The record gives the reactivity of an RNA of 207 nucleotides to 2A3. It was measured as part of the RMDB library RNAMAK. 2A3 adducts were read by reverse transcription with SuperScript II with manganese. Reactivities are given for positions 27 through 156.
RNA sequence: GGGAACGACUCGAGUAGAGUCGAAAAUAUCUUCUUCGGAAGAUACACCCCGGGGUCAAGAAGCUAGAACUACACCGUUGAUCGUCUGAAGCCUCCACGGACGGGAGGUGCUAGCCACUGACGGAGGCACCCAUAUGCCAAGUGUUCGCACUUGGAAGUCAUGAUUCGAAUUCGUUCGAAUCAUGACAAAAGAAACAACAACAACAAC
Reactivity to 2A3 in 0.01 (KOAc 150mM, MgCl2 10mM, bicine 150mM(pH8.5), 24C), signal-to-noise 3, nucleotides 027 to 156: u090a000u000c000u010u000c000u020u080c300g080g000a000a020g000a000u030a030c080a100c000c000c000c000g020g030g000g000u120c080a070a070g050a090a000g110c000u020a010g000a140a130c160u290a110c240a000c010c010g230u300u030g020a010u010c010g020u010c000u020g030a120a000g020c000c000u000c010c000a000c010g000g020a000c000g000g010g000a010g030g010u010g010c000u000a020g000c000c000a070c060u240g120a060c080g000g000a000g010g030c000a020c000c030c010a150u190a030u260g060c000c000a000a000g000u000g000u040u140c220g020c130a000c000u010u040g000g000a010a010